[RMDB]
RNA sequence: GGGAACGACUCGAGUAGAGUCGAAAAAGGAUAAGCCUCUCCCUGGAGUAGGGCUUGACCUGGUGAGGGUGUGGUAGAGUCACAGGGGAGGGUCCCACUUGGUCCUUGGGCUGGGAUCAGACUCUCAUACAUUCAACACGUUCGCGUGUUGAAUGUAAAAAGAAACAACAACAACAAC
Reactivity to DMS in 0.01 (KOAc 150mM, MgCl2 10mM, bicine 150mM(pH8.5), 24C), signal-to-noise 2, nucleotides 027 to 126: a050g000g010a200u010a040a060g020c000c000u010c010u010c030c020c150u000g020g010a050g010u000a050g010g010g010c010u000u000g000a030c010c000u010g010g020u000g000a150g000g000g000u000g010u000g010g020u010a030g000a050g020u000c030a110c140a140g000g000g010g010a080g020g010g000u010c020c020c000a080c120u010u010g020g000u000c020c070u010u010g020g000g000c170u010g000g000g000a080u010c080a040g000a040c050u010c000u010c110a260
Reactivity to 2A3 in 0.01 (KOAc 150mM, MgCl2 10mM, bicine 150mM(pH8.5), 24C), signal-to-noise 1, nucleotides 027 to 126: a000g090g000a170u110a090a000g030c020c010u060c030u050c040c000c170u190g090g040a050g040u130a110g000g070g020c000u000u010g020a030c000c010u020g070g050u210g050a120g010g030g000u080g010u110g020g080u060a030g000a020g030u040c020a020c070a150g000g000g000g020a040g000g000g020u030c010c000c000a000c000u020u100g050g010u110c070c000u070u100g130g080g000c140u070g020g000g000a000u010c010a030g060a040c000u020c000u000c000a010
About this RNA:
An RNA of 177 nucleotides, treated with DMS and 2A3 and read out base by base. For 2A3 the reverse transcriptase was SuperScript II with manganese. The reactions ran in a buffer of 150 mM KOAc, 10 mM MgCl2 and 150 mM bicine (pH 8.5), at 24 C. It was measured as part of the RMDB library OK2TST. For DMS, 3,591 sequencing reads were counted.